An RNA of 207 nucleotides, treated with 2A3 and read out base by base.
RNA sequence: GGGAACGACUCGAGUAGAGUCGAAAACUGUUGGAACAAAUGCACCCGUGCUAGUGUCAACGACGUUGUCGUUGGCGCGACGUCAUCAAAUUGCGGGAAAUGUCCAGGACGAAAUGGGAUACCAAGCACGGCAGCACACGUCAUUCGUGCUGGAGUGGCCCAACAGUAUGUUCGCAUACUGUUGGGCAAAAGAAACAACAACAACAAC
Reactivity to 2A3 in 0.01 (KOAc 150mM, MgCl2 10mM, bicine 150mM(pH8.5), 24C), signal-to-noise 1, nucleotides 027 to 156: c130u060g010u020u000g100g000a080a120c070a130a180a080u090g020c040a070c020c000c000g000u020g010c000u060a000g000u000g010u010c000a000a000c000g000a000c300g180u100u190g030u040c000g010u000u000g000g020c000g000c020g000a000c010g020u100c000a000u020c030a070a270a200u190u130g010c000g000g010g070a000a000a070u110g040u060c010c010a000g040g070a060c040g100a000a140a140u050g000g040g010a040u060a220c040c010a040a040g000c090a050c010g020g020c070a000g140c000a060c020a020c000g220u210c090a060u030u070c010g000u010g140c000u000g000g000a060g030u120g040